[RMDB]
RNA sequence: GGGAACGACUCGAGUAGAGUCGAAAAACACCGUGCAAAAAGCACGGAAGACUCGUGCAAAAGAAAGGCUGGAAAGAUGCACGAGAAAGCCAGCCAUGAAAAGACAGCGGGAAAACCGCUGUCGAAAGGACAUGUUCCACUUCGGUGGAGCAUGUCCAAAAGAAACAACAACAACAAC
Reactivity to 2A3 in 0.01 (KOAc 150mM, MgCl2 10mM, bicine 150mM(pH8.5), 24C), signal-to-noise 4, nucleotides 027 to 126: a000c030a030c010c000g000u010g000c010a160a170a020a240a030g000c010a000c000g000g010a010a010g020a010c000u000c000g000u000g000c010a030a080a110a060g140a080a080a030g060g000c020u020g020g040a100a090a040g130a080u070g000c000a000c020g020a020g020a060a010a000g050c000c000a000g000c010c010a040u210g060a060a060a000a010g000a000c000a000g000c000g000g010g030a010a150a090a130c000c010g000c000u000g000u000c000g000a000a000a010
Reactivity to DMS in 0.01 (KOAc 150mM, MgCl2 10mM, bicine 150mM(pH8.5), 24C), signal-to-noise 3, nucleotides 027 to 126: a100c130a170c020c010g010u030g000c000a110a050a060a190a170g000c000a000c010g020g000a040a040g030a240c060u000c000g000u000g000c000a050a120a080a090g020a070a080a080g020g030c020u000g000g000a090a060a090g010a140u000g020c000a030c000g020a010g000a070a050a110g010c000c000a020g000c000c010a120u050g000a080a040a070a090g000a000c000a010g000c000g000g000g000a090a030a080a190c000c000g000c000u000g000u000c000g000a050a010a040